[RMDB]
RNA sequence: GGGAACGACUCGAGUAGAGUCGAAAAGUGUAGCGUCACUUCGAUGGCGGUACUAUGAAUUGAUGCAAGGUGUGGAGCGACCUUAAACAGUUCUGGUGGUGCUCUGAAUGGAGUGCUCUACUGAGAUUUAACUUAUGCACGUUCGCGUGCAUAAGAAUCACUAUUCGAUCUUCGGAUCGAAUAGUGAAAAAGAAACAACAACAACAAC
Reactivity to 2A3 in 0.01 (KOAc 150mM, MgCl2 10mM, bicine 150mM(pH8.5), 24C), signal-to-noise 5, nucleotides 027 to 156: g070u040g000u020a020g070c000g030u000c000a010c040u170u130c110g220a260u050g000g020c000g030g090u000a010c020u020a050u150g050a050a040u100u070g050a060u070g100c060a060a010g040g000u030g030u100g060g030a010g010c010g010a020c000c000u040u110a070a040a010c030a050g020u020u010c020u040g000g020u060g000g110u010g010c020u000c010u100g130a080a090u250g010g010a010g030u010g000c010u000c020u030a070c040u080g060a010g050a200u070u130u150a070a030c000u000u000a000u000g000c000a010c000g000u030u020c170g020c010g080u010g000c000a000u000a000a000g000a000a010
An RNA of 207 nucleotides, treated with 2A3 and read out base by base. Source: RMDB library M2RFPK, as collected in RNAgym. The RNA was probed in 150 mM KOAc, 10 mM MgCl2 and 150 mM bicine (pH 8.5) at 24 C.